[RMDB]
RNA sequence: GGGAACGACUCGAGUAGAGUCGAAAAAGCAUGCGUAUGCUCCAUCCGAAACGUACGCGUACGGAAACCAUCCUCAGCGGUGGAAGGAUGGGAAAGCAUGCGAUGGAUGGGAAAGCAUGCUGGCAUACGUCACAAUGCCGUGGCAGGAUGGGAAAGCACGCUUCAUCAAGUUCGCUUGAUGAAGCGUAAAAGAAACAACAACAACAAC
Reactivity to 2A3 in 0.01 (KOAc 150mM, MgCl2 10mM, bicine 150mM(pH8.5), 24C), signal-to-noise 1, nucleotides 027 to 156: a000g110c020a020u060g000c040g000u030a000u020g070c040u020c010c000a040u000c000c000g150a070a180a090c020g010u060a020c110g030c020g150u000a010c050g050g020a070a040a050c020c000a000u040c000c000u150c100a050g000c080g110g020u040g000g050a070a040g050g000a000u030g000g000g050a070a000a010g000c010a020u010g000c010g010a060u120g060g050a050u040g000g000g060a080a000a000g000c000a000u010g000c000u000g000g000c030a020u050a080c020g080u030c040a050c000a040a180u180g000c030c000g010u030g000g000c070a000g000g060a010u000g010g020g000a050a030a000g000c060

This 207-nucleotide RNA was probed chemically with 2A3. Source: RMDB library OK3TST, as collected in RNAgym. For 2A3 the reverse transcriptase was SuperScript II with manganese.